[RMDB]
RNA sequence: GGGAACGACUCGAGUAGAGUCGAAAAGAGGAUCCACGCCCUGACCACACAGGCUGCCUACGAGCUGCACGUGGACCUGGAGGACUUUGAGAAUGGCACGGCCUAUGCCCGCUACGGGAGCUUCGGCGUGGGCUUGUUCUCCGUGGACCCUGAGGAAACCUAAAAUGGCAUUCGUGCCAUUUUAGGUAAAAGAAACAACAACAACAAC
Reactivity to 2A3 in 0.01 (KOAc 150mM, MgCl2 10mM, bicine 150mM(pH8.5), 24C), signal-to-noise 4, nucleotides 027 to 156: g090a030g010g030a120u000c010c010a000c010g040c020c010c000u050g070a110c010c000a030c000a000c000a050g100g020c060u060g040c010c020u230a210c120g060a090g030c030u050g020c070a050c140g000u010g000g050a140c000c030u060g020g010a070g020g030a050c040u170u110u150g030a090g030a050a050u070g070g000c060a040c110g040g030c020c000u010a010u020g000c000c000c000g040c110u160a140c160g090g000g060a070g130c070u150u120c050g020g010c010g020u050g000g000g000c000u040u090g010u000u000c000u000c000c010g010u000g000g010a020c010c010c000u010g020a100g020g140a140a100
Reactivity to DMS in 0.01 (KOAc 150mM, MgCl2 10mM, bicine 150mM(pH8.5), 24C), signal-to-noise 1, nucleotides 027 to 156: g000a140g000g040a050u000c020c000a080c010g040c060c030c040u030g010a180c030c010a130c050a100c000a090g000g000c040u000g020c020c000u010a110c090g030a110g030c020u000g020c120a230c060g010u010g000g010a130c030c030u000g000g020a250g000g000a070c080u010u000u010g020a130g020a090a080u020g030g050c040a040c040g020g000c020c010u000a060u000g010c000c010c060g030c040u000a130c140g050g020g000a090g010c030u000u010c100g040g010c010g080u010g020g000g020c010u000u000g050u000u000c030u000c000c050g000u000g010g010a080c010c000c000u000g010a110g000g000a130a190